[RMDB]
RNA sequence: GGGAACGACUCGAGUAGAGUCGAAAAGGACGGCAAGGGUGGAGGUGACCGCAUCGGCCGCGCCAGCCGUGAUGGUGUACGGGGCGGAGAUGACCAUUCCGCUGUCUAGUAAGAGGAUGGCCCUCCAUAGAACAAACUUGUUCGCAAGUUUGUUCUAAAAAGAAACAACAACAACAAC
Reactivity to DMS in 0.01 (KOAc 150mM, MgCl2 10mM, bicine 150mM(pH8.5), 24C), signal-to-noise 4, nucleotides 027 to 126: g000g010a050c020g000g000c040a110a110g000g000g040u010g000g010a090g000g020u010g030a100c060c160g020c020a070u000c060g010g030c040c030g000c030g000c020c010a190g000c020c010g000u020g020a090u060g010g000u000g000u050a100c160g020g010g010g010c010g000g010a210g000a060u010g020a110c050c030a030u030u000c000c020g000c010u000g000u020c060u020a070g010u050a080a090g000a130g000g000a070u000g000g000c030c010c000u000c020c030a160
Reactivity to 2A3 in 0.01 (KOAc 150mM, MgCl2 10mM, bicine 150mM(pH8.5), 24C), signal-to-noise 2, nucleotides 027 to 126: g040g010a020c020g010g010c080a090a150g090g040g000u060g010g050a030g040g060u090g090a100c010c010g040c010a030u040c050g300g040c000c020g000c040g090c000c000a030g010c020c000g040u140g040a180u300g010g000u070g000u060a090c070g000g000g030g000c010g010g000a020g000a030u100g030a080c010c020a020u150u030c000c000g000c010u030g020u040c030u020a050g040u050a080a090g030a030g120g000a030u150g060g010c000c000c020u020c010c000a030
Annotation:
An RNA of 177 nucleotides, treated with DMS and 2A3 and read out base by base. For DMS, 8,031 sequencing reads were counted. Reactivities are given for positions 27 through 126.